[RMDB]
RNA sequence: GGGAACGACUCGAGUAGAGUCGAAAACUUACCACAGGCUGUGUUCCUACACUGACCAUAUAGAAAGAGGAGGCAGAAUAAACCUAUCCUAUGUACACUUCAGCCUAGGCCACUGUGUCUGGUCUGUGUUCUCCUACCAGUUCGCUGGUAGGAGAACAAAAGAAACAACAACAACAAC
Reactivity to 2A3 in 0.01 (KOAc 150mM, MgCl2 10mM, bicine 150mM(pH8.5), 24C), signal-to-noise 3, nucleotides 027 to 126: c010u040u100a020c000c010a010c040a060g000g000c010u000g030u010g010u150u080c030c010u060a020c030a050c020u040g090a130c010c040a040u070a010u020a100g200a060a190a000g040a010g040g020a010g000g030c010a000g120a220a040u130a130a040a010c010c030u070a070u120c010c000u040a070u080g060u090a040c080a000c090u030u060c000a000g000c000c010u000a030g040g000c010c010a120c070u100g050u030g010u140c050u010g020g030u000c010u000g040u020
Reactivity to DMS in 0.01 (KOAc 150mM, MgCl2 10mM, bicine 150mM(pH8.5), 24C), signal-to-noise 1, nucleotides 027 to 126: c080u000u050a170c050c030a090c080a080g000g000c000u010g010u000g000u000u010c060c010u000a110c010a070c000u010g010a070c050c040a090u000a060u000a100g000a000a250a060g000a070g030g000a040g000g000c030a100g010a130a070u010a060a090a050c060c030u000a070u020c000c050u030a040u000g080u000a100c150a070c130u000u000c050a100g000c020c030u000a030g000g000c290c040a060c060u040g000u000g000u000c160u000g000g000u000c070u000g010u000

Notes
An RNA of 177 nucleotides, treated with 2A3 and DMS and read out base by base. Conditions: 150 mM KOAc, 10 mM MgCl2 and 150 mM bicine (pH 8.5), 24 C. Values are in units of 0.01, from 0 to 300, in steps of 10.